[RMDB]
RNA sequence: GGGAACGACUCGAGUAGAGUCGAAAAGAUUGCGGCUGCUGAUAAUAUUGCGGGUACGGCCACUGUUCAGGAACUACGUAUUGGUAGGAUACGGGCAUCAGAGGUUGAACGCUCUGGCCGAGAUAAAAGUAAUAUAUAGGUUCGCCUAUAUAUUACUAAAAGAAACAACAACAACAAC
Reactivity to 2A3 in 0.01 (KOAc 150mM, MgCl2 10mM, bicine 150mM(pH8.5), 24C), signal-to-noise 9, nucleotides 027 to 126: g070a030u080u140g030c010g010g000c010u030g000c020u040g120a060u070a230a060u140a140u140u120g030c020g020g020g030u060a040c020g020g000c010c000a030c010u030g020u040u030c020a040g070g090a130a050c020u070a040c060g070u090a090u130u130g130g010u080a030g040g000a010u030a070c010g030g030g000c030a050u090c010a070g040a010g070g020u070u110g040a060a020c030g020c050u010c020u040g000g010c000c010g030a050g000a020u190a030a120a020
Reactivity to DMS in 0.01 (KOAc 150mM, MgCl2 10mM, bicine 150mM(pH8.5), 24C), signal-to-noise 7, nucleotides 027 to 126: g010a090u020u010g010c040g010g020c010u000g020c020u010g000a100u030a080a080u020a090u030u020g020c050g000g000g020u010a080c060g010g010c010c010a060c110u000g010u010u000c050a070g010g010a100a110c080u010a070c040g010u020a070u020u020g000g020u010a060g000g010a090u020a080c050g000g000g000c060a050u030c050a040g000a050g010g000u030u000g000a090a130c200g000c040u000c060u010g000g010c000c000g000a090g000a070u020a040a070a060
Annotation:
Chemical mapping of a 177-nucleotide RNA with 2A3 and DMS. The reactions ran in a buffer of 150 mM KOAc, 10 mM MgCl2 and 150 mM bicine (pH 8.5), at 24 C. For 2A3 the reverse transcriptase was SuperScript II with manganese.